Source: RMDB library RNAMAK, as collected in RNAgym. The record gives the reactivity of an RNA of 207 nucleotides to DMS and 2A3. Values cover nucleotides 27 to 156. For 2A3 the reverse transcriptase was SuperScript II with manganese.
RNA sequence: GGGAACGACUCGAGUAGAGUCGAAAAUCCUAAGUCCCUGGGAGGAGUAGAGAGCCGAGGAUCAUUAUCGGAAACGAUAAUGGGAGGCUCUUGAUCUCCGACGAUCAGGGAUAUGGAAAAACAUCUCCCUAUCGGGUUCGCCCGAUAGGGAGAUGAACGUCUAUAUUGAGUUCGCUCAAUAUAGACGAAAAGAAACAACAACAACAAC
Reactivity to DMS in 0.01 (KOAc 150mM, MgCl2 10mM, bicine 150mM(pH8.5), 24C), signal-to-noise 1, nucleotides 027 to 156: u000c000c000u010a130a280g020u000c000c010c010u000g000g000g000a190g020g000a030g010u010a300g000a000g000a030g010c000c030g010a140g010g000a080u010c010a010u000u000a000u000c000g040g010a150a140a300c000g040a030u000a010a020u000g010g010g000a080g010g020c000u020c000u010u010g000a220u010c000u010c010c000g010a070c100g000a130u000c040a040g010g000g020a000u000a000u000g010g000a090a120a180a120a170c010a030u000c030u010c000c000c010u000a020u010c010g050g040g000u000u010c300g020c000c000c000g040a030u000a020g000g010g000a000g000a010u010g000a040a190
Reactivity to 2A3 in 0.01 (KOAc 150mM, MgCl2 10mM, bicine 150mM(pH8.5), 24C), signal-to-noise 1, nucleotides 027 to 156: u000c000c000u030a050a050g040u000c000c000c000u010g000g000g000a010g000g000a010g000u040a000g010a010g000a000g000c010c000g060a230g020g010a010u010c000a000u010u000a000u000c000g020g050a080a030a040c010g000a000u000a000a000u010g000g000g000a010g000g020c000u020c010u000u010g010a010u000c000u000c000c000g020a030c010g000a010u020c020a010g010g010g000a000u010a030u020g000g010a040a110a010a060a000c000a000u000c000u000c000c000c000u020a000u000c000g000g000g120u110u080c260g070c050c000c000g010a000u000a000g020g000g010a020g000a000u000g000a000a000